[RMDB]
RNA sequence: GGGAACGACUCGAGUAGAGUCGAAAAGCCGUGCUCGAGAGGGAGCAGAAAAUGCAGAGCUAUCCCGUGGUUUCGCUAAACAAAUGCGAAACGACAAAUUGCGUUACAUACGCAAUCCUCUAAUGAAACAGAACACAGGAUUCGUCCUGUGUUCUGUAAAAGAAACAACAACAACAAC
Reactivity to 2A3 in 0.01 (KOAc 150mM, MgCl2 10mM, bicine 150mM(pH8.5), 24C), signal-to-noise 3, nucleotides 027 to 126: g040c000c010g080u040g020c000u010c020g080a030g010a000g040g060g010a000g000c010a000g110a020a140a010a010u230g030c050a000g050a060g070c000u030a030u060c030c000c010g000u040g050g030u010u000u000c010g000c020u060a130a220a140c060a090a080a010u090g000c010g000a010a000a000c010g020a000c030a010a100a000u020u020g000c000g050u020u100a170c080a100u250a030c040g010c010a010a010u000c010c000u000c000u010a070a130u200g080a090a080
Reactivity to DMS in 0.01 (KOAc 150mM, MgCl2 10mM, bicine 150mM(pH8.5), 24C), signal-to-noise 3, nucleotides 027 to 126: g030c010c050g020u000g000c000u010c000g010a050g010a020g000g000g010a020g010c010a060g000a060a080a100a060u020g030c140a150g000a110g020c020u000a110u000c010c000c010g030u000g010g020u000u000u000c000g010c000u000a060a100a150c300a070a050a070u010g010c000g010a010a000a010c000g010a060c060a040a040a020u000u000g010c000g000u000u000a070c300a160u010a020c010g000c010a010a010u000c010c010u000c000u000a100a100u000g000a090a110
An RNA of 177 nucleotides, treated with 2A3 and DMS and read out base by base. It was measured as part of the RMDB library M2PK90. The reactions ran in a buffer of 150 mM KOAc, 10 mM MgCl2 and 150 mM bicine (pH 8.5), at 24 C. The DMS profile rests on 2,525 reads. DMS adducts were read by reverse transcription with MarathonRT.